Description: Chemical mapping of a 177-nucleotide RNA with 2A3 and DMS. For 2A3, 4,657 sequencing reads were counted. High 2A3 reactivity points to a flexible backbone, as in loops and unpaired stretches. The reactions ran in a buffer of 150 mM KOAc, 10 mM MgCl2 and 150 mM bicine (pH 8.5), at 24 C. The data come from the RNA Mapping Database (RMDB), library M2PK50.

RNA sequence: GGGAACGACUCGAGUAGAGUCGAAAAGAUCUCCGGUUCGCCGGAGAUCAAAGAAGUCACAACGGCUUCCUGACGUGGCAGAUUGAAUUAUUGGAGCAUAAAAAAUCGUUCCCUUCGGGGAACGAAAGACUUGGUUUAAGUUCGCUUAAACCAAGUCAAAAGAAACAACAACAACAAC
Reactivity to 2A3 in 0.01 (KOAc 150mM, MgCl2 10mM, bicine 150mM(pH8.5), 24C), signal-to-noise 3, nucleotides 027 to 126: g000a000u000c000u010c000c000g020g030u030u040c160g020c060c000g000g010a000g020a010u010c000a000a000a000g010a030a000g010u030c020a000c020a110a080c090g090g000c010u260u040c010c010u030g010a030c070g010u010g010g010c020a030g040a180u130u150g120a170a140u200u070a060u130u230g010g000a010g020c040a020u220a050a150a010a000a000a040u010c000g010u000u010c000c000c000u010u020c110g080g000g000g000a000a000c000g000a000a000a010
Reactivity to DMS in 0.01 (KOAc 150mM, MgCl2 10mM, bicine 150mM(pH8.5), 24C), signal-to-noise 2, nucleotides 027 to 126: g000a000u000c000u010c000c000g000g020u000u030c220g050c010c010g000g000a020g000a010u000c010a010a040a110g000a130a080g010u000c000a050c080a050a160c160g000g000c030u020u010c010c030u020g010a110c170g010u000g020g000c020a030g000a260u000u000g020a070a080u000u000a050u000u020g020g000a070g020c050a130u030a000a040a090a090a020a060u000c000g000u000u000c000c000c000u010u010c160g050g010g000g000a000a000c000g000a020a040a040